[RMDB]
RNA sequence: GGGAACGACUCGAGUAGAGUCGAAAAUUACAUGAAAGCUGUGUUAAUAGGUGGCGAUAUCAAUGCAUGGUUAAGUAAUGGUCCGAUGGCUGGUAUCUCGGUUCUAGCAUAUAGUUACCGAAUAACAGAGCUAGUAAAUGUUCGCAUUUACUAGCUCAAAAGAAACAACAACAACAAC
Reactivity to DMS in 0.01 (KOAc 150mM, MgCl2 10mM, bicine 150mM(pH8.5), 24C), signal-to-noise 4, nucleotides 027 to 126: u040u020a070c080a070u040g010a070a110a130g000c020u000g000u000g000u000u010a060a070u010a080g010g020u020g040g010c060g010a080u010a040u010c100a050a070u040g000c030a010u000g010g000u010u020a090a110g030u000a000a060u020g010g000u010c070c050g000a070u020g010g030c060u000g000g010u000a040u000c090u010c000g010g000u010u010c020u000a090g030c200a100u030a080u030a030g000u000u000a090c000c020g000a060a110u040a050a090c180a160
Reactivity to 2A3 in 0.01 (KOAc 150mM, MgCl2 10mM, bicine 150mM(pH8.5), 24C), signal-to-noise 4, nucleotides 027 to 126: u150u070a030c030a020u070g160a110a040a010g050c070u040g050u000g000u150u160a100a060u080a190g110g000u060g030g030c060g020a030u060a010u200c040a070a000u080g020c010a020u030g050g020u100u170a060a090g000u010a150a000u050g050g020u040c030c000g020a030u070g060g000c040u010g050g000u090a100u030c060u010c050g060g010u030u000c020u020a070g030c070a080u180a010u010a300g060u080u060a010c020c000g050a080a000u050a020a060c060a050
The data come from the RNA Mapping Database (RMDB), library OK1LIB. Chemical mapping of a 177-nucleotide RNA with DMS and 2A3. 2A3 adducts were read by reverse transcription with SuperScript II with manganese. For DMS, 5,718 sequencing reads were counted.